[RMDB]
RNA sequence: GGGAACGACUCGAGUAGAGUCGAAAAGCGUACUACAAGAAGGGAAAGUAAGCGACGAUCUAUGGUUUAGUAGGUGUCCCAAAUAGGACACUGAACAACCAUAGGGAGCUUAUAACACUUCUUGUAUCGCAAAGCAUAGCCCUUCGGGGCUAUGCAAUCCUUAGCUGCAGUUCGCUGCAGCUAAGGAAAAAGAAACAACAACAACAAC
Reactivity to 2A3 in 0.01 (KOAc 150mM, MgCl2 10mM, bicine 150mM(pH8.5), 24C), signal-to-noise 1, nucleotides 027 to 156: g000c020g010u040a040c050u010a000c040a000a010g010a000a000g070g000g020a130a170a140g030u010a000a000g010c000g200a180c030g010a100u000c000u010a000u000g000g000u020u010u000a000g000u000a000g000g020u000g020u030c000c010c030a160a260a060u300a110g000g000a000c000a010c000u000g000a020a000c010a000a000c000c000a000u000a000g000g000g000a000g000c000u010u000a010u090a110a060c080a000c000u000u010c000u010u000g000u000a000u170c000g000c030a150a050a000g020c000a000u000a000g000c000c010c000u000u040c210g060g000g000g010c010u000a000u000g000c000a020a020
Notes:
Structure probing data (2A3) for a 207-nucleotide construct. The reactions ran in a buffer of 150 mM KOAc, 10 mM MgCl2 and 150 mM bicine (pH 8.5), at 24 C.